Structure probing data (2A3 and DMS) for a 207-nucleotide construct.

RNA sequence: GGGAACGACUCGAGUAGAGUCGAAAACUGCCCCAAAUCGACCCAACUACAUUGGUUUCCGAGACAACUUUAUCGGUCUCAUGUACUACAACAGUAACGGCAAUCUGGGCGUGUUGGCCGGGCAAGCUUCUCAGCUCAAUGCGGUCGUCGACCUGCACUAUUGGUUGGAGUUCGCUCCAACCAAUAGAAAAGAAACAACAACAACAAC
Reactivity to 2A3 in 0.01 (KOAc 150mM, MgCl2 10mM, bicine 150mM(pH8.5), 24C), signal-to-noise 3, nucleotides 027 to 156: c030u040g020c000c000c000c000a010a090a100u120c040g110a200c020c000c020a030a010c060u110a030c030a110u040u070g060g010u050u070u080c050c060g020a040g030a060c090a120a130c130u290u280u120a140u280c040g000g010u000c000u000c000a020u090g010u000a100c030u050a050c080a140a020c030a220g010u090a150a030c020g040g000c020a020a050u030c040u080g020g060g040c040g010u090g020u080u170g070g030c140c080g000g000g010c020a070a050g000c030u090u020c040u010c080a040g000c000u000c030a060a110u060g020c020g000g020u020c000g040u020c000g070a100c000c020u020g000c020a000
Reactivity to DMS in 0.01 (KOAc 150mM, MgCl2 10mM, bicine 150mM(pH8.5), 24C), signal-to-noise 1, nucleotides 027 to 156: c040u010g000c060c000c010c040a090a220a110u010c000g000a150c030c010c020a050a130c020u000a060c010a150u000u000g010g010u000u000u000c090c040g000a060g040a060c020a100a060c060u010u000u120a150u020c130g000g000u000c010u010c010a070u020g020u000a150c040u000a100c040a070a060c020a070g000u000a100a150c110g020g030c010a110a120u000c040u020g000g000g090c010g040u010g030u010u000g000g060c100c140g070g010g000c030a090a060g020c020u000u000c040u010c060a040g000c090u010c000a010a140u000g050c020g040g010u000c010g010u000c000g010a120c000c010u000g030c060a180
Annotation:
For 2A3 the reverse transcriptase was SuperScript II with manganese. For 2A3, 1,350 sequencing reads were counted. For DMS, 1,738 sequencing reads were counted. The reactions ran in a buffer of 150 mM KOAc, 10 mM MgCl2 and 150 mM bicine (pH 8.5), at 24 C.